[RMDB]
RNA sequence: GGGAACGACUCGAGUAGAGUCGAAAACAGCCAUGUCAAAAGAAGGUAAAGAAGUCAAGAAAAAGCCAUGAAGCCCAUUUGGUUUCAUUUUUCUGAAAAUAGGCUCAAGAGGGAAUAAAUUAGAAACUCACAAUUUCUCUUGUUUGUUACCAAGACAUAUCUCACACUAAUUCGUUAGUGUGAGAUAAAAAGAAACAACAACAACAAC
Reactivity to DMS in 0.01 (KOAc 150mM, MgCl2 10mM, bicine 150mM(pH8.5), 24C), signal-to-noise 2, nucleotides 027 to 156: c110a100g010c050c020a150u010g030u000c040a080a070a070a140g040a150a090g010g020u000a060a050a110g010a100a060g010u010c030a090a040g000a100a100a070a100a090g020c130c070a080u020g020a030a060g010c030c020c140a180u000u000u000g020g010u010u000u010c020a110u010u010u010u000u000c030u000g000a070a070a080a130u000a060g010g050c030u000c030a040a090g000a090g010g000g000a050a060u000a020a040a120u000u000a070g010a080a070a080c030u010c190a070c090a070a120u000u000u000c030u000c040u000u010g000u000u020u000g000u000u000a040c040c050a010a080g000a060c080a140
Reactivity to 2A3 in 0.01 (KOAc 150mM, MgCl2 10mM, bicine 150mM(pH8.5), 24C), signal-to-noise 2, nucleotides 027 to 156: c010a010g050c020c010a030u050g040u040c010a020a000a130a130g050a070a020g020g000u050a040a030a070g050a080a010g000u040c020a020a020g010a010a140a020a010a000g010c030c010a010u030g000a030a020g010c000c020c070a080u090u130u210g000g000u020u030u010c010a040u020u040u010u000u030c010u010g030a030a030a040a060u140a060g000g000c010u010c020a000a000g010a020g070g010g030a010a050u090a100a080a000u120u110a070g080a110a080a010c070u100c070a030c030a080a160u030u050u020c020u000c000u000u020g090u130u050u090g050u020u060a020c010c030a010a030g020a000c050a020